[RMDB]
RNA sequence: GGGAACGACUCGAGUAGAGUCGAAAAGGCCAACGCCGUGCCCAUUCAGCUUCCCGUCGGUGCGGAGGCCGACUUCGAAGGCGUCGUCGACCUGGUGGAGAUGAACGCCAAGGUGUGGCGCGGCGAGUCGCGGAUAUCCGUUCGCGGAUAUCCGCGAAAAAGAAACAACAACAACAAC
Reactivity to 2A3 in 0.01 (KOAc 150mM, MgCl2 10mM, bicine 150mM(pH8.5), 24C), signal-to-noise 3, nucleotides 027 to 126: g090g050c000c010a020a020c010g000c000c000g010u010g000c000c000c000a000u150u160c040a020g050c040u060u020c010c000c000g050u030c010g000g070u170g090c120g080g030a150g140g000c010c000g010a030c010u240u120c050g090a100a060g000g030c000g000u000c000g010u000c000g100a270c010c000u300g190g100u300g050g040a030g010a000u050g030a070a000c000g000c000c010a030a000g020g000u060g100u170g000g000c010g000c000g000g000c000g000a000g030
Chemical mapping of a 177-nucleotide RNA with 2A3. For 2A3 the reverse transcriptase was SuperScript II with manganese.